[RMDB]
RNA sequence: GGGAACGACUCGAGUAGAGUCGAAAAGCCUUUACGUUCGCGUAAAGGCAAAGGAGGCUCGAGUCUGUGUGUGCGUAACGAGCCUCCACGGACACACAGACAAAACCCUGCUGUUCGCAGCAGGGAACUAUGUAAUACACUUCGGUGUAUUACAUAGAAAAGAAACAACAACAACAAC
Reactivity to DMS in 0.01 (KOAc 150mM, MgCl2 10mM, bicine 150mM(pH8.5), 24C), signal-to-noise 8, nucleotides 027 to 126: g000c000c000u000u000u000a000c000g010u000u010c210g030c010g020u000a000a000a010g000g010c000a000a020a060g010g010a120g010g010c020u000c040g010a180g010u000c000u000g010u000g010u000g020u000g010c050g010u010a090a100c090g000a060g010c020c010u000c030c050a010c020g010g000a040c020a010c000a000c010a010g010a020c020a110a070a090a150c010c000c000u000g000c000u000g010u000u010c190g010c010a010g010c000a010g000g000g010a010a030
Reactivity to 2A3 in 0.01 (KOAc 150mM, MgCl2 10mM, bicine 150mM(pH8.5), 24C), signal-to-noise 9, nucleotides 027 to 126: g000c000c000u000u010u000a020c020g010u020u070c260g000c000g110u010a000a010a010g000g000c000a010a020a000g020g010a020g030g010c020u020c080g080a070g040u000c020u010g010u000g000u010g000u040g140c080g030u060a150a100c090g020a050g060c000c010u020c020c000a000c020g040g000a000c000a000c000a000c000a020g020a010c020a020a080a050a070c000c000c000u000g000c000u010g030u040u060c230g000c110a000g000c000a000g000g000g000a000a000